Source information:
An RNA of 177 nucleotides, treated with 2A3 and DMS and read out base by base. Reactivities are given for positions 27 through 126. The 2A3 profile rests on 733 reads. For DMS, 1,215 sequencing reads were counted. Conditions: 150 mM KOAc, 10 mM MgCl2 and 150 mM bicine (pH 8.5), 24 C.
[RMDB]
RNA sequence: GGGAACGACUCGAGUAGAGUCGAAAAGGCGUUAUGCUUUGCCCGGUAUGCAUACCGCUGCGGGCGAACAAGCCAGCUGGCCUGAAGGUAAGCGCUAUGCAUUGCACCAUGCCAUUAUCAGCGGUGACAUCAUUGGGACCUUCGGGUCCCAAUGAUGAAAAGAAACAACAACAACAAC
Reactivity to 2A3 in 0.01 (KOAc 150mM, MgCl2 10mM, bicine 150mM(pH8.5), 24C), signal-to-noise 1, nucleotides 027 to 126: g030g000c050g170u200u160a120u300g010c120u000u030u040g040c000c000c110g050g080u120a040u160g000c050a060u030a260c000c060g000c000u000g000c000g040g000g000c070g010a020a010c150a070a090g000c020c000a010g000c020u080g030g000c020c000u020g110a140a040g000g060u050a030a010g030c000g000c050u030a080u220g020c090a020u090u090g050c010a000c000c000a020u100g000c140c000a150u300u260a150u180c010a010g060c000g120g000u000g030a030
Reactivity to DMS in 0.01 (KOAc 150mM, MgCl2 10mM, bicine 150mM(pH8.5), 24C), signal-to-noise 1, nucleotides 027 to 126: g020g010c000g030u010u020a110u010g000c070u000u000u000g020c000c000c050g020g000u000a050u000g020c090a060u000a050c110c000g020c000u000g020c190g020g010g040c000g000a080a120c110a120a130g020c040c050a090g010c180u000g010g000c000c020u000g010a110a040g010g010u000a060a050g000c000g020c140u010a070u020g000c050a080u000u000g030c040a080c050c050a050u010g000c000c090a070u000u000a080u030c130a050g020c010g010g020u000g010a220